[RMDB]
RNA sequence: GGGAACGACUCGAGUAGAGUCGAAAAGGAAUUGCGCUCGAUGAGGAUCUUUAGUAAUUUGAACAUCAGGGCCGGAAUUUUUUCGUAGACUUUAUACAAUUGAUAAAAGACCAGUUCGGUGUGCACGCCCACCUUUCCCAUUCGUGGGAAAGGUGGGAAAAGAAACAACAACAACAAC
Reactivity to 2A3 in 0.01 (KOAc 150mM, MgCl2 10mM, bicine 150mM(pH8.5), 24C), signal-to-noise 1, nucleotides 027 to 126: g000g020a100a000u000u180g060c050g000c000u080c000g110a110u000g240a260g000g170a210u000c000u000u050u090a130g050u240a180a240u040u100u210g070a060a020c050a090u060c210a130g000g000g000c030c030g000g010a000a000u150u000u000u000u000u000c060g000u000a070g000a270c000u130u000u060a050u010a070c090a010a220u110u150g120a000u090a130a010a000a000g150a000c000c000a010g010u080u050c000g020g010u050g000u000g140c000a060c000g030